[RMDB]
RNA sequence: GGGAACGACUCGAGUAGAGUCGAAAAUUCAGCAGGGUCCGCGUUCCAUCCUUUCUUACCUGAUGGCCGGCAUGGUCCCAGCCUCCUCGCUGGCGCCGGCUGGGCAACAUUCCGAGGGGACCGUCCCACCGACUCGUCUUCGGACGAGUCAAAAGAAACAACAACAACAAC
Reactivity to DMS in 0.01 (KOAc 150mM, MgCl2 10mM, bicine 150mM(pH8.5), 24C), signal-to-noise 5, nucleotides 027 to 129: u040u010c070a060g000c110a090g010g000g010u030c050c030g050c000g030u010u010c000c010a080u030c000c010u040u070u030c060u030u070a080c160c010u060g020a070u010g040g000c090c010g000g000c000a080u050g020g040u040c210c000c000a030g030c000c000u040c100c060u040c150g020c050u000g040g000c220g020c020c040g030g000c020u030g010g060g040c090a180a000c060a160u060u030c000c000g000a100g060g020g040g000a000c070c060g020u040c000c000c040a070c120c100
Reactivity to 2A3 in 0.01 (KOAc 150mM, MgCl2 10mM, bicine 150mM(pH8.5), 24C), signal-to-noise 6, nucleotides 027 to 129: u090u050c010a000g000c030a040g030g000g080u030c020c010g060c030g090u100u010c000c020a040u040c040c020u080u140u110c040u120u160a160c030c060u050g030a070u090g080g010c000c000g010g000c050a060u110g040g020u140c020c000c010a020g000c000c010u100c020c010u060c080g000c060u040g060g010c080g000c020c020g020g020c010u000g000g000g000c030a080a030c020a120u090u020c010c010g010a020g020g030g010g010a000c000c000g010u000c000c000c010a030c020c040